[RMDB]
RNA sequence: GGGAACGACUCGAGUAGAGUCGAAAAUUGUGGUCAAGACCUUGGCGUAGUAUCCAAGGUUGUCAAGGUUCCUAUUGACUUAACAAUGAUUGAGUUUAUGUUAUGGUGUAAGCAUGGACAGGGGAAAGUAUUAAGAGCGUUUCGACGCUCUUAAUACAAAAGAAACAACAACAACAAC
Reactivity to 2A3 in 0.01 (KOAc 150mM, MgCl2 10mM, bicine 150mM(pH8.5), 24C), signal-to-noise 3, nucleotides 027 to 126: u010u030g010u030g000g020u060c010a030a000g020a020c000c020u000u000g000g010c020g090u120a040g050u040a120u080c020c040a040a010g040g000u000u030g000u000c000a030a030g040g000u040u040c010c010u000a110u020u030g020a010c000u050u050a050a020c040a040a100u090g070a170u090u110g060a060g120u040u040u020a040u060g050u050u080a080u160g080g050u050g020u090a050a030g020c010a010u020g010g000a020c000a010g010g010g000g000a020a090a050
Reactivity to DMS in 0.01 (KOAc 150mM, MgCl2 10mM, bicine 150mM(pH8.5), 24C), signal-to-noise 7, nucleotides 027 to 126: u000u010g040u000g010g010u010c040a040a090g000a020c010c000u000u000g000g010c180g000u000a150g010u010a130u010c060c040a030a020g010g010u000u000g010u000c100a050a060g010g000u000u000c060c100u010a140u000u000g010a020c010u000u010a090a030c020a040a040u000g010a150u010u010g010a100g010u000u000u000a020u010g000u000u000a090u000g010g010u000g010u010a060a070g010c020a030u000g010g010a030c030a120g000g000g000g010a110a060a090
Structure probing data (2A3 and DMS) for a 177-nucleotide construct. The DMS profile rests on 10,931 reads. Conditions: 150 mM KOAc, 10 mM MgCl2 and 150 mM bicine (pH 8.5), 24 C. The 2A3 profile rests on 4,652 reads.